[RMDB]
RNA sequence: GGGAACGACUCGAGUAGAGUCGAAAAAGUAAGUCCUUCUGGUAUUCCGCAUUGUCAAUUUGUGCUUGAGCAUCGAUCAACACAGCAGGAAGCCGGAUUUAGCCGACAAACAUGGUGCAGAAUGCCACCGCAUGGUAUUAUUCGUAAUACCAUGCGGAAAAGAAACAACAACAACAAC
Reactivity to 2A3 in 0.01 (KOAc 150mM, MgCl2 10mM, bicine 150mM(pH8.5), 24C), signal-to-noise 4, nucleotides 027 to 126: a000g140u120a070a000g060u000c020c000u050u140c070u060g010g000u030a160u050u010c010c000g000c040a030u050u050g040u040c040a070a130u070u050u060g030u010g060c100u030u060g020a030g030c020a130u210c120g110a060u030c020a020a050c010a010c020a040g060c020a010g020g140a060a030g020c010c000g000g000a000u050u040u100a050g060c020c000g000a020c030a010a120a010c060a050u130g030g000u010g010c000a000g020a100a000u050g010c010c050a050
Reactivity to DMS in 0.01 (KOAc 150mM, MgCl2 10mM, bicine 150mM(pH8.5), 24C), signal-to-noise 4, nucleotides 027 to 126: a100g020u010a090a130g010u000c020c020u010u010c140u000g010g030u000a040u000u000c010c010g020c020a060u010u000g020u010c120a100a100u010u000u000g020u000g010c170u000u000g000a060g010c120a120u010c230g010a080u000c020a040a030c030a040c050a060g000c210a050g010g010a070a100g020c010c000g010g010a180u000u010u000a100g000c030c030g000a040c050a060a080a090c190a040u000g000g000u000g020c040a040g020a020a030u000g000c010c010a110